[RMDB]
RNA sequence: GGGAACGACUCGAGUAGAGUCGAAAAGAUAUGGACGUUAUAGACAUGACGAUCGGAAACGAUACGUCAACAGCUAUGCGUCCUAAGUCAAAACCAGUACCGAAUAGUUCGCUAUUCGGUACUGGAACCACGAAAGUAGGUUCGCCUACUUUCGUGGAAAAGAAACAACAACAACAAC
Reactivity to DMS in 0.01 (KOAc 150mM, MgCl2 10mM, bicine 150mM(pH8.5), 24C), signal-to-noise 2, nucleotides 027 to 126: g030a030u000a300u000g000g010a010c000g020u000u020a020u000a000g010a040c130a210u020g000a010c000g000a080u000c000g000g000a100a100a160c000g000a000u010a070c000g000u000c000a000a070c300a130g000c020u000a000u010g010c000g000u000c000c000u040a000a070g010u000c030a070a040a120a230c000c000a000g000u000a000c020c000g000a000a000u000a000g000u000u010c260g000c000u000a000u000u000c000g000g000u000a000c000u000g000g000a000a030
Reactivity to 2A3 in 0.01 (KOAc 150mM, MgCl2 10mM, bicine 150mM(pH8.5), 24C), signal-to-noise 3, nucleotides 027 to 126: g020a020u050a050u080g010g000a000c000g010u100u300a020u010a010g110a090c060a090u060g000a000c010g000a010u010c020g010g010a080a040a010c020g000a010u290a300c000g000u010c000a030a020c050a030g000c010u010a000u000g000c000g020u020c010c000u000a030a020g030u010c040a010a000a070a130c030c000a010g010u000a000c010c000g000a010a000u000a000g050u090u080c300g010c180u000a000u000u020c000g000g000u010a000c000u000g000g000a000a010